RNA sequence: GGGAACGACUCGAGUAGAGUCGAAAACCAGAGGUGAAAUUCUUUGAUUAGUUGAGGACGAACAAUUGCGAAAGCAUCUGCCAGGGACGUUUCUGUUGAUCAAGAACGAAAGUUAGGGGAUCGAAGAUACCUUAUACUGGUUCGCCAGUAUAAGGUAAAAAGAAACAACAACAACAAC
Reactivity to DMS in 0.01 (KOAc 150mM, MgCl2 10mM, bicine 150mM(pH8.5), 24C), signal-to-noise 8, nucleotides 027 to 126: c010c010a100g010a100g010g010u010g010a070a110a100u010u010c020u010u010u000g010a060u010u010a070g010u000u000g000a060g000g010a050c060g010a080a080c100a060a060u010u000g020c030g010a090a090a110g020c030a030u010c050u010g000c050c060a090g000g000g010a070c070g010u010u010u000c010u010g020u010u010g010a050u010c070a050a070g000a050a030c060g000a070a060a090g010u000u010a080g010g000g010g010a090u010c040g010a060a070g010a200
Reactivity to 2A3 in 0.01 (KOAc 150mM, MgCl2 10mM, bicine 150mM(pH8.5), 24C), signal-to-noise 6, nucleotides 027 to 126: c000c010a010g040a050g070g060u110g060a080a080a110u140u030c060u090u080u070g040a060u040u090a030g070u020u040g050a050g020g030a010c020g030a090a050c050a120a130u090u080g010c030g030a120a020a010g020c000a060u010c010u070g040c000c030a040g010g000g040a030c030g020u020u050u030c030u020g070u080u030g030a090u060c020a020a110g020a090a030c020g050a120a000a020g020u100u060a050g010g020g040g000a020u040c040g020a030a000g040a050

An RNA of 177 nucleotides, treated with DMS and 2A3 and read out base by base. 2A3 is a SHAPE reagent: it acylates the 2'-hydroxyl of flexible nucleotides of all four kinds. The RNA was probed in 150 mM KOAc, 10 mM MgCl2 and 150 mM bicine (pH 8.5) at 24 C. 2A3 adducts were read by reverse transcription with SuperScript II with manganese. Values cover nucleotides 27 to 126. Source: RMDB libraries RFM100 and RFMREP, as collected in RNAgym.